The record gives the reactivity of an RNA of 177 nucleotides to 2A3 and DMS. The RNA was probed in 150 mM KOAc, 10 mM MgCl2 and 150 mM bicine (pH 8.5) at 24 C. For DMS the reverse transcriptase was MarathonRT. The 2A3 profile rests on 5,883 reads.

RNA sequence: GGGAACGACUCGAGUAGAGUCGAAAAGAGUAAUGGGCGCACAAGGUGAGAUGAAGCUGUAGUCUCACUGGAAGGACUAGAGGUUAGAGGAGACGCGCCCAAAACAAGAAACAGCUUCAUCAAGAGACAUUAGGUGAUCAUUCGUGAUCACCUAAUGAAAAGAAACAACAACAACAAC
Reactivity to 2A3 in 0.01 (KOAc 150mM, MgCl2 10mM, bicine 150mM(pH8.5), 24C), signal-to-noise 5, nucleotides 027 to 126: g100a000g040u140a120a090u120g000g000g000c010g020c000a030c030a120a070g190g060u170g100a130g020a020u010g010a010a010g000c020u020g010u060a030g020u010c010u010c010a060c020u030g010g050a010a050g090g010a020c040u080a080g050a060g170g030u190u130a020g010a050g070g080a020g020a020c000g010c010g010c000c000c000a010a010a010a010c000a010a020g040a030a150a000c000a000g000c000u010u020c010a050u030c020a030a040g080a020g010a070
Reactivity to DMS in 0.01 (KOAc 150mM, MgCl2 10mM, bicine 150mM(pH8.5), 24C), signal-to-noise 5, nucleotides 027 to 126: g020a130g020u030a060a190u000g000g020g040c000g040c010a210c170a080a130g020g010u010g010a170g000a000u000g010a020a020g020c000u000g020u010a110g010u000c010u000c020a060c060u010g010g000a100a090g000g010a040c060u030a090g010a110g010g020u030u010a070g000a120g000g000a060g010a040c050g000c040g000c020c010c000a000a000a050a060c130a120a120g010a090a090a060c010a000g000c010u000u000c020a010u010c020a150a110g010a140g010a150